[RMDB]
RNA sequence: GGGAACGACUCGAGUAGAGUCGAAAAGAAUAUAAGAGCGCAGUAAAUGUGAGAGCAAACUGCGCCCGGACUGUAGGAUCCGGUGGCACAGCAACGCUCAGUCACAAAACGCUGUGCCACAUGAAGAGGAUUUAAUCCGUUUCGACGGAUUAAAUCCAAAAGAAACAACAACAACAAC
Reactivity to DMS in 0.01 (KOAc 150mM, MgCl2 10mM, bicine 150mM(pH8.5), 24C), signal-to-noise 2, nucleotides 027 to 126: g050a130a110u000a070u020a110a050g000a120g000c000g020c000a000g010u000a120a100a090u000g000u020g000a200g020a170g000c000a050a020a030c000u000g000c000g030c050c000c000g000g010a040c060u030g010u010a140g000g000a160u000c050c000g050g020u000g020g030c000a030c010a000g030c000a160a130c200g000c150u040c060a090g030u060c140a170c180a090a120a060a170c160g000c000u020g000u000g000c010c000a000c000a000u040g050a110a140g000a110
Reactivity to 2A3 in 0.01 (KOAc 150mM, MgCl2 10mM, bicine 150mM(pH8.5), 24C), signal-to-noise 4, nucleotides 027 to 126: g060a050a010u180a010u050a100a060g020a040g000c000g000c000a010g010u020a010a080a100u060g010u050g030a100g000a000g060c020a100a210a010c000u000g000c000g000c000c000c020g010g000a010c020u170g100u300a110g130g030a110u000c010c000g010g020u010g000g000c010a010c010a010g000c050a100a030c070g030c020u110c090a070g070u170c040a080c030a140a100a040a000c100g020c000u000g000u010g000c000c000a010c000a010u140g030a060a020g070a040
Structure probing data (DMS and 2A3) for a 177-nucleotide construct. Conditions: 150 mM KOAc, 10 mM MgCl2 and 150 mM bicine (pH 8.5), 24 C. For DMS the reverse transcriptase was MarathonRT. Reactivities are given for positions 27 through 126. The DMS profile rests on 2,009 reads.